Record summary:
Source: RMDB library M2PK90, as collected in RNAgym. Structure probing data (DMS and 2A3) for a 177-nucleotide construct. The DMS profile rests on 2,126 reads. Values cover nucleotides 27 to 126. The 2A3 profile rests on 2,222 reads. The reactions ran in a buffer of 150 mM KOAc, 10 mM MgCl2 and 150 mM bicine (pH 8.5), at 24 C. For DMS the reverse transcriptase was MarathonRT.

RNA sequence: GGGAACGACUCGAGUAGAGUCGAAAAAGAAACCACGGAAACGAGCCUCCCUGGCAAGGUAAAUGGUACGGUCCCUCCGAGCAAAGGCACCAAAAGCUGAGAUGAGCUCAGCAAGGGUAAAAAAAAACAUUAUCUUUAACUUCGGUUAAAGAUAAUGAAAAGAAACAACAACAACAAC
Reactivity to DMS in 0.01 (KOAc 150mM, MgCl2 10mM, bicine 150mM(pH8.5), 24C), signal-to-noise 3, nucleotides 027 to 126: a080g000a090a090a070c010c030a050c070g000g010a060a090a090c070g010a140g000c040c020u000c050c010c010u020g010g010c060a080a060g000g010u010a070a070a070u000g010g000u010a080c090g000g010u010c030c010c010u000c020c020g010a070g020c040a050a050a090g000g000c060a050c020c020a040a040a090a100g000c000u010g000a060g000a300u000g010a220g040c000u000c000a010g010c000a070a080g010g000g010u020a000a000a010a010a050a060a070a060a060
Reactivity to 2A3 in 0.01 (KOAc 150mM, MgCl2 10mM, bicine 150mM(pH8.5), 24C), signal-to-noise 2, nucleotides 027 to 126: a000g090a100a080a000c040c000a020c020g040g070a080a110a050c040g000a030g020c000c040u030c040c000c020u030g040g000c020a030a020g040g010u050a030a050a090u100g030g010u050a020c060g020g050u040c000c000c000u000c010c010g000a010g000c010a050a090a030g040g000c000a020c010c010a020a140a090a060g000c020u010g010a010g000a130u230g110a040g150c000u020c000a000g000c010a000a010g000g000g000u090a120a100a000a000a000a020a000a050a000